Structure probing data (DMS and 2A3) for a 177-nucleotide construct. The reactions ran in a buffer of 150 mM KOAc, 10 mM MgCl2 and 150 mM bicine (pH 8.5), at 24 C. It was measured as part of the RMDB library OK2TRN. For DMS the reverse transcriptase was MarathonRT. For 2A3, 2,951 sequencing reads were counted.

RNA sequence: GGGAACGACUCGAGUAGAGUCGAAAAGGACAACAGAGGGAGACCCCUGUCUCUACAAGAAAUAAAAAAUUAGCUAGGCAUGGUGGCAUGCACUUGUAGUCCUGGCUACUCGGGAGGCUGAGGUGGGCCCAUUGAUACUGUUCGCAGUAUCAAUGGGAAAAGAAACAACAACAACAAC
Reactivity to DMS in 0.01 (KOAc 150mM, MgCl2 10mM, bicine 150mM(pH8.5), 24C), signal-to-noise 4, nucleotides 027 to 126: g000g010a030c060a080a050c040a040g010a100g010g010g010a130g000a150c020c020c030c030u000g010u000c030u000c050u010a080c070a070a040g000a080a070a090u030a020a060a070a090a090a090u010u000a030g020c050u000a020g010g020c040a070u000g010g020u000g000g040c160a080u010g020c010a060c020u000u000g010u010a070g000u000c020c010u000g000g010c030u000a020c050u010c120g020g020g000a080g010g010c060u010g020a050g010g000u000g000g010g000
Reactivity to 2A3 in 0.01 (KOAc 150mM, MgCl2 10mM, bicine 150mM(pH8.5), 24C), signal-to-noise 2, nucleotides 027 to 126: g040g000a010c020a090a010c020a130g070a100g070g040g030a100g020a080c050c010c000c030u050g040u010c020u000c000u050a070c030a000a100g130a110a150a030u300a100a140a030a010a010a070u170u070a020g030c030u020a010g010g000c020a030u120g000g040u060g060g090c060a030u200g020c020a050c030u020u070g050u080a070g020u020c010c030u000g020g000c000u040a040c010u010c010g000g010g010a020g040g000c060u040g020a040g030g030u120g020g030g020